[RMDB]
RNA sequence: GGGAACGACUCGAGUAGAGUCGAAAACUCUGGUGCUAUGGAAACAGCCGCUUAUCGUGAAGCUGCAGCAUGUCAUCUUGCUAAAGCCUUACAAACAUACAGCGAGACUGGUAGUGAUCUUCUUUACAAGCCCCGUGGUUCGCCACGGGGAAAAGAAACAACAACAACAAC
Reactivity to 2A3 in 0.01 (KOAc 150mM, MgCl2 10mM, bicine 150mM(pH8.5), 24C), signal-to-noise 2, nucleotides 027 to 129: c020u030c050u080g000g000u150g040c030u020a040u120g050g110a100a000a000c010a000g020c000c000g010c000u000u050a070u140c110g030u070g090a010a000g000c020u000g030c010a000g000c000a000u040g010u220c000a100u120c040u020u010g000c010u020a090a000a000g000c000c000u090u030a040c010a010a190a020c020a000u090a080c030a020g050c000g020a070g010a240c020u010g020g110u050a060g010u010g010a020u000c010u030u000c000u010u040u040a090c090a210a000g020
Reactivity to DMS in 0.01 (KOAc 150mM, MgCl2 10mM, bicine 150mM(pH8.5), 24C), signal-to-noise 1, nucleotides 027 to 129: c020u030c020u050g000g000u000g050c050u000a150u060g030g000a020a020a050c120a000g100c000c080g000c020u000u000a030u050c080g000u000g020a110a110g000c050u000g000c300a000g030c000a100u000g120u040c210a140u000c130u020u050g010c060u000a050a220a180g020c020c010u010u020a060c100a100a150a080c120a070u030a070c160a070g040c000g010a120g000a110c060u040g000g050u010a040g000u050g030a160u010c010u090u020c040u000u060u020a070c040a030a170g010
Source: RMDB library 15KLIB, as collected in RNAgym. This 170-nucleotide RNA was probed chemically with 2A3 and DMS. The reactions ran in a buffer of 150 mM KOAc, 10 mM MgCl2 and 150 mM bicine (pH 8.5), at 24 C. For DMS, 3,693 sequencing reads were counted.